[RMDB]
RNA sequence: GGGAACGACUCGAGUAGAGUCGAAAACAUAGCGUUUCACAAUGUGCGCCAUUAACAUUGUUUAUGCAAGCACGUUUCGCAAUGUACGGCGCAGAAACAUUGCCAACACAAAUACGCUGCACGAUGUAAAACAUCGGUGCGUUCGCGCACCGAUGAAUCAGUUAAUGAUCUUCGGAUCAUUAACUGAAAAAGAAACAACAACAACAAC
Reactivity to 2A3 in 0.01 (KOAc 150mM, MgCl2 10mM, bicine 150mM(pH8.5), 24C), signal-to-noise 9, nucleotides 027 to 156: c060a050u130a030g020c020g020u030u110u130c120a040c010a020a020u030g010u020g030c010g000c030c020a090u160u170a050a010c010a010u010u020g080u050u110u120a120u130g050c080a070a100g090c050a030c160g010u040u100u100c050g000c010a010a000u010g000u010a020c050g010g000c020g020c030a010g040a010a060a000c010a010u010u020g030c060c050a140a020c060a050c030a100a160a030u160a030c030g010c010u040g000c060a040c120g090a070u140g040u220a010a070a070a060c010a000u000c000g000g000u000g020c010g000u010u030c190g000c000g000c040a000c010c000g000a000u000g000a000a010
Reactivity to DMS in 0.01 (KOAc 150mM, MgCl2 10mM, bicine 150mM(pH8.5), 24C), signal-to-noise 4, nucleotides 027 to 156: c060a090u000a060g020c040g000u000u000u010c080a070c020a060a080u000g010u010g010c030g020c000c020a140u000u010a100a080c020a040u000u000g020u000u000u010a050u020g020c040a110a130g030c090a120c100g010u000u000u000c140g020c030a030a030u000g020u000a080c110g000g020c010g000c020a060g010a130a090a130c030a020u000u000g030c010c040a050a070c040a080c050a050a070a100u000a070c040g020c000u010g000c030a080c100g010a120u000g000u000a010a090a080a160c000a000u010c000g010g020u000g030c010g030u000u000c290g020c020g020c010a010c000c000g020a000u010g000a020a070
The record gives the reactivity of an RNA of 207 nucleotides to 2A3 and DMS. For 2A3, 11,028 sequencing reads were counted. 2A3 is a SHAPE reagent: it acylates the 2'-hydroxyl of flexible nucleotides of all four kinds. Conditions: 150 mM KOAc, 10 mM MgCl2 and 150 mM bicine (pH 8.5), 24 C.